Background
An RNA of 177 nucleotides, treated with DMS and 2A3 and read out base by base.

[RMDB]
RNA sequence: GGGAACGACUCGAGUAGAGUCGAAAAGAAGAUGUGUUCGCACAUCUUCAAAAGCAACGACUAGCACCGGCGAGACAAAGGACCGAUAGCUAAUCGCGACGAAAACAGGCCUCUUCGGAGGCCUGAAGAGUAAAACGAACUUCGGUUCGUUUUACUCAAAAGAAACAACAACAACAAC
Reactivity to DMS in 0.01 (KOAc 150mM, MgCl2 10mM, bicine 150mM(pH8.5), 24C), signal-to-noise 1, nucleotides 027 to 126: g020a020a070g000a030u010g030u000g010u030u010c290g000c000a000c000a040u000c000u000u000c000a000a120a050a100g020c100a190a070c030g020a020c050u000a040g020c010a060c030c030g020g010c030g030a140g000a160c220a020a090a160g000g000a040c060c030g000a030u000a090g020c020u000a030a020u010c010g010c040g000a150c230g000a040a020a050a140c000a000g010g000c000c000u010c010u000u000c120g030g000a010g000g000c000c000u000g000a010a060
Reactivity to 2A3 in 0.01 (KOAc 150mM, MgCl2 10mM, bicine 150mM(pH8.5), 24C), signal-to-noise 1, nucleotides 027 to 126: g010a010a000g000a000u010g000u000g020u080u090c140g000c090a030c000a000u020c050u020u000c000a020a020a010a000g030c050a040a050c030g010a000c010u020a000g000c020a010c000c020g040g040c010g060a140g010a170c130a080a140a130g080g030a210c000c000g040a040u040a090g020c000u000a040a000u020c010g020c040g020a060c050g060a160a020a010a110c000a000g020g040c010c020u010c010u060u050c140g050g000a000g000g000c040c000u000g000a010a010

High DMS reactivity at an A or C suggests that its Watson-Crick edge is free. It was measured as part of the RMDB library M2PK50. The 2A3 profile rests on 1,135 reads. Values cover nucleotides 27 to 126.